[RMDB]
Source information
An RNA of 207 nucleotides, treated with 2A3 and read out base by base.
RNA sequence: GGGAACGACUCGAGUAGAGUCGAAAAAGAGUCACGCGCGGAUCGUGAUCACUGCGGUGAUGGAACAAGAGGGUUUGUCGCAGUCCGUCGUGGCCGAUAAAGCGAAGUGCUCCAAGGCAUUCGUCGGACACCUCAUCUCCGGCCGGCGCGACUCCUGGGUGCUCGUAAGGUUCGCCUUACGAGCACCAAAAGAAACAACAACAACAAC
Reactivity to 2A3 in 0.01 (KOAc 150mM, MgCl2 10mM, bicine 150mM(pH8.5), 24C), signal-to-noise 1, nucleotides 027 to 156: a000g050a010g020u000c000a010c020g070c000g010c000g030g050a140u030c060g080u200g080a000u000c040a020c060u090g020c070g190g010u020g000a040u080g030g000a110a100c130a080a140g010a050g000g160g000u090u090u040g150u140c090g080c110a020g000u000c000c000g030u030c000g000u060g040g000c010c000g030a130u220a030a020a000g010c010g160a160a010g110u080g180c010u000c050c050a090a000g010g000c000a240u050u050c000g000u000c000g010g000a000c040a000c000c000u000c010a000u000c020u010c040c000g010g130c030c000g030g030c000g020c020g000a000c000u000c000c010u100g010